[RMDB]
RNA sequence: GGGAACGACUCGAGUAGAGUCGAAAACGGGAGUUCGCUCCCGCCAGAGAUAUGGAUCCUUCCGAGCAACUCUACCCACCGAAUACGAUCGGAAACGAUCGUUCGAGGAGUUGCGUUUGACGAAGGAUCCUAAGUCGUUCACAACCUUCGGGUUGAAUAUUGUACUAAUGUUCGCAUUAGUACAAUAAAAAGAAACAACAACAACAAC
Reactivity to 2A3 in 0.01 (KOAc 150mM, MgCl2 10mM, bicine 150mM(pH8.5), 24C), signal-to-noise 6, nucleotides 027 to 156: c010g000g020g000a020g000u100u170c200g100c140u010c000c000c020g000c000c010a140g020a010g000a070u050a030u180g000g000a000u000c000c010u010u010c010c020g050a070g080c000a000a000c000u020c000u080a150c080c060c060a040c020c000g010a010a020u190a170c030g000a000u000c000g030g000a050a030a010c010g000a000u000c000g010u000u000c010g000a010g010g000a000g000u000u000g010c020g030u100u100u140g040a040c040g000a000a000g000g000a000u000c000c000u000a000a000g010u000c010g030u130u140c080a040c000a080a030c010c010u060u080c260g090g000g010u010u010g010a040a020
Reactivity to DMS in 0.01 (KOAc 150mM, MgCl2 10mM, bicine 150mM(pH8.5), 24C), signal-to-noise 3, nucleotides 027 to 156: c020g000g020g000a030g020u000u000c300g040c030u000c000c000c000g020c020c040a100g010a300g010a100u000a080u010g020g010a020u000c020c010u000u000c010c010g010a160g020c040a000a030c000u000c010u000a020c010c000c010a300c140c010g000a050a040u000a020c050g030a020u010c000g020g000a130a150a300c010g000a010u000c000g010u000u000c000g000a130g010g010a050g010u000u000g010c000g000u010u000u010g030a100c080g000a040a010g010g020a020u000c000c000u000a000a040g000u000c010g010u000u000c030a090c010a060a090c030c010u000u000c210g020g010g040u000u000g020a070a140
Chemical mapping of a 207-nucleotide RNA with 2A3 and DMS. Reactivities are given for positions 27 through 156. For DMS, 8,541 sequencing reads were counted.